Annotation: Chemical mapping of a 207-nucleotide RNA with DMS and 2A3. For 2A3, 21,213 sequencing reads were counted.

[RMDB]
RNA sequence: GGGAACGACUCGAGUAGAGUCGAAAAACCGAUCACGCACGAGAUGGUCCUUACGGGGUGUCCCAACAGUCGAGGGGCACGCAGGAUGCCUAGAAUAGACCACUAGGUAUCCUCAGUGCGCCAUGCAAUGGAGGAGCAUGGUGCACUGCAGGGCUCCGACGUAUGUAUGGUUCGCCAUACAUACGUCAAAAGAAACAACAACAACAAC
Reactivity to DMS in 0.01 (KOAc 150mM, MgCl2 10mM, bicine 150mM(pH8.5), 24C), signal-to-noise 2, nucleotides 027 to 156: a070c020c010g000a160u020c060a050c080g000c060a190c060g000a120g020a110u000g010g000u000c020c030u000u020a100c120g050g030g040g040u000g020u010c010c020c000a050a050c070a120g020u000c090g000a150g030g000g030g020c020a030c010g000c060a020g000g000a010u000g000c000c000u000a010g010a040a070u010a090g010a170c020c050a150c000u000a010g010g060u000a010u000c020c000u000c000a020g020u010g000c020g040c000c000a000u000g000c040a060a050u010g040g050a110g040g020a230g000c000a040u000g000g000u000g010c000a010c020u000g020c000a040g000g000g010c000u000c030c050
Reactivity to 2A3 in 0.01 (KOAc 150mM, MgCl2 10mM, bicine 150mM(pH8.5), 24C), signal-to-noise 9, nucleotides 027 to 156: a010c020c010g020a080u110c050a040c140g100c020a040c090g080a060g020a170u110g030g020u040c020c020u110u170a090c080g020g000g000g020u020g020u010c000c010c010a070a080c080a070g220u200c080g090a110g010g000g000g000c020a010c040g070c000a000g000g000a000u000g010c000c000u010a010g040a080a050u090a090g120a120c040c010a020c040u000a000g000g000u010a000u000c000c000u000c000a000g000u000g000c000g000c000c000a000u000g000c000a030a230u150g040g080a060g010g020a040g010c000a000u000g000g000u010g000c000a000c000u000g000c030a020g020g020g000c000u010c030c050
The RNA was probed in 150 mM KOAc, 10 mM MgCl2 and 150 mM bicine (pH 8.5) at 24 C.